[RMDB]
RNA sequence: GGGAACGACUCGAGUAGAGUCGAAAAAACGGCAUUAAUUAAGGUUGGGGAUAUCUUGUUUAAAGGCACCCAUAAUCGAUAACGAUCAUCUUUUGCCAAGGUUAAUCGCAGCAGUUUUCCAGACUGAGAUCUACACACGUUUCGACGUGUGUAGAUCAAAAGAAACAACAACAACAAC
Reactivity to 2A3 in 0.01 (KOAc 150mM, MgCl2 10mM, bicine 150mM(pH8.5), 24C), signal-to-noise 1, nucleotides 027 to 126: a000a000c020g030g050c030a010u000u080a110a010u020u030a140a030g030g040u080u040g080g040g000g030a010u020a000u070c030u020u090g100u030u130u090a100a120a050g000g000c030a020c050c020c010a020u120a080a030u050c060g050a050u040a080a060c040g050a020u010c030a000u010c060u040u050u030u080g000c000c000a000a020g030g030u030u030a020a040u040c130g000c020a030g060c020a020g030u060u010u050u040c000c000a010g010a060c020u050g060a040
Reactivity to DMS in 0.01 (KOAc 150mM, MgCl2 10mM, bicine 150mM(pH8.5), 24C), signal-to-noise 2, nucleotides 027 to 126: a010a050c130g010g000c020a050u000u000a010a020u010u010a050a240g010g000u000u010g000g010g000g010a020u000a010u000c020u010u000g010u000u000u000a040a080a100g040g020c160a050c070c120c050a070u000a120a070u000c130g000a070u010a070a090c090g030a020u000c140a040u010c040u050u000u000u000g010c060c020a030a210g000g000u000u020a010a000u010c150g030c060a020g020c040a110g000u000u000u000u030c010c000a210g000a080c100u000g000a280